[RMDB]
RNA sequence: GGGAACGACUCGAGUAGAGUCGAAAAUUGUAUAAAGAGUGUAGUGCGGCAUCUAGGUGUUACUAAAGGCAUAUUGACAGGCUGUUUUAGUUUUGCCAAGAUGUUAUUUAUGCUUCCACUAGCUUACCAUUCCGAUUGAGUUCGCUCAAUCGGAAUGAAAAGAAACAACAACAACAAC
Reactivity to DMS in 0.01 (KOAc 150mM, MgCl2 10mM, bicine 150mM(pH8.5), 24C), signal-to-noise 2, nucleotides 027 to 126: u000u010g000u000a060u010a070a090a100g000a070g020u000g000u010a020g000u010g040c090g000g000c000a040u000c040u000a080g000g000u000g000u000u000a050c030u020a030a020a070g010g000c010a020u000a300u010u010g000a070c280a100g020g010c020u000g000u020u020u000u000a010g020u000u000u000u000g000c010c000a050a040g000a030u020g000u000u000a050u000u000u000a040u020g000c040u000u000c090c030a060c090u000a060g000c080u010u000a070c080
Reactivity to 2A3 in 0.01 (KOAc 150mM, MgCl2 10mM, bicine 150mM(pH8.5), 24C), signal-to-noise 1, nucleotides 027 to 126: u020u040g010u010a130u090a120a120a000g080a040g070u050g040u040a030g070u060g090c050g020g000c000a000u020c000u000a040g000g000u030g080u040u020a000c000u000a010a010a000g000g000c000a010u050a040u200u180g100a080c090a100g100g050c010u020g080u090u050u000u020a000g000u000u030u160u040g000c030c000a000a000g000a000u000g020u030u010a070u040u160u030a070u110g010c000u170u000c040c000a050c040u060a010g000c000u040u060a010c010